[RMDB]
RNA sequence: GGGAACGACUCGAGUAGAGUCGAAAAAAAGAUAUGGAGUGCUGGAGCUGCAUCGUCCGCAGAUAUCUUUCGGAAACGAAAGAUGUAGGACGACCUCGGGCAGCGAUGAAAGCACUCCUAAGUCAAAGGUAUGAUUAACGUUCGCGUUAAUCAUACCAAAAGAAACAACAACAACAAC
Reactivity to 2A3 in 0.01 (KOAc 150mM, MgCl2 10mM, bicine 150mM(pH8.5), 24C), signal-to-noise 1, nucleotides 027 to 126: a000a000a000g090a010u110a080u200g010g010a000g040u010g000c020u060g010g010a010g030c000u000g010c010a050u030c000g020u000c000c020g070c070a040g040a300u090a000u090c030u000u000u020c020g020g000a090a040a070c000g000a010a020a010g000a010u020g000u040a080g020g010a010c000g000a000c010c020u110c160g040g220g000c000a000g000c000g080a130u040g000a010a000a000g000c020a000c000u000c010c000u000a030a030g000u010c050a080a050a090
Reactivity to DMS in 0.01 (KOAc 150mM, MgCl2 10mM, bicine 150mM(pH8.5), 24C), signal-to-noise 3, nucleotides 027 to 126: a070a030a060g000a020u010a300u030g000g020a030g000u000g000c000u000g030g010a050g010c010u000g010c030a280u000c000g000u010c000c000g000c260a140g000a050u000a010u000c000u000u000u000c010g000g000a120a090a290c020g000a010a010a010g000a020u000g010u010a100g010g000a010c000g000a030c300c100u010c190g020g000g020c000a010g010c010g000a090u000g010a140a120a070g010c010a010c010u000c000c000u000a010a100g000u000c040a060a090a120